[RMDB]
RNA sequence: GGGAACGACUCGAGUAGAGUCGAAAAGGGAGACAGGGAGAGAGCAGGCGGCCCUGCCCUGGGCAGAGCCAGAGAAACUGGAGGGAGGCCUGGGUGCUCCCCUGGGCAGCUUCCCAGGCAAACCCAACUAGGCCAUAGCAUUCGUGCUAUGGCCUAGAAAAGAAACAACAACAACAAC
Reactivity to DMS in 0.01 (KOAc 150mM, MgCl2 10mM, bicine 150mM(pH8.5), 24C), signal-to-noise 1, nucleotides 027 to 126: g040g010g010a080g000a130c050a050g000g000g000a080g000a030g000a080g020c040a080g030g020c100g010g010c010c010c020u010g020c050c010c120u010g020g020g040c040a060g010a040g000c010c000a080g000a110g000a040a070a040c120u000g010g010a110g000g020g000a150g000g000c000c000u000g000g000g020u020g000c010u000c020c050c030c080u000g000g000g020c240a000g010c030u000u000c000c010c020a040g000g010c040a030a050a070c010c000c000a100a210